[RMDB]
RNA sequence: GGGAACGACUCGAGUAGAGUCGAAAAGGAGAGGACAUCAGGGAUGUGGGUGGUAGGAGCCCACCGGAGUGACUGGAAAUGUCUGAGGAGCCAGGGCAGGAAAGGCAGUCAGGGAGAGCCAAGGGCACGUCACUAUGCACCCUGAAGCAUGGGAUCCCUAGAUAAGGAUGUUCGCAUCCUUAUCUAGAAAAGAAACAACAACAACAAC
Reactivity to DMS in 0.01 (KOAc 150mM, MgCl2 10mM, bicine 150mM(pH8.5), 24C), signal-to-noise 1, nucleotides 027 to 156: g000g000a090g020a020g000g010a060c060a100u020c040a180g000g020g000a140u000g040u000g010g040g020u000g000g090u010a130g020g000a220g010c050c010c020a040c050c020g060g000a080g030u000g020a170c010u000g020g110a050a090a070u000g030u000c010u000g000a000g010g000a090g010c030c050a080g000g000g000c020a090g000g000a030a090a100g030g050c110a110g020u000c050a100g020g030g010a050g000a050g020c070c050a100a110g010g030g050c030a080c110g020u030c070a050c030u000a030u000g020c050a070c030c000c000u020g020a120a130g000c060a110u010g000g010g000a120u000c100c100
Reactivity to 2A3 in 0.01 (KOAc 150mM, MgCl2 10mM, bicine 150mM(pH8.5), 24C), signal-to-noise 3, nucleotides 027 to 156: g070g000a050g010a010g010g010a030c020a090u040c050a040g060g030g000a090u090g030u080g030g010g020u020g010g040u080a100g020g090a020g010c000c010c010a030c010c020g040g000a050g030u040g030a020c030u030g010g060a050a110a110u110g030u000c040u050g030a060g020g030a000g040c040c030a050g020g030g010c030a040g090g010a060a020a020g060g010c040a000g020u060c050a010g010g030g000a090g020a000g030c020c020a030a020g000g000g010c050a010c050g020u020c040a030c100u060a090u160g000c010a020c010c010c000u010g030a050a020g030c030a040u080g000g010g040a050u070c020c010

The record gives the reactivity of an RNA of 207 nucleotides to DMS and 2A3. High DMS reactivity at an A or C suggests that its Watson-Crick edge is free. For 2A3 the reverse transcriptase was SuperScript II with manganese. The RNA was probed in 150 mM KOAc, 10 mM MgCl2 and 150 mM bicine (pH 8.5) at 24 C. For DMS the reverse transcriptase was MarathonRT. The 2A3 profile rests on 2,410 reads. For DMS, 2,174 sequencing reads were counted.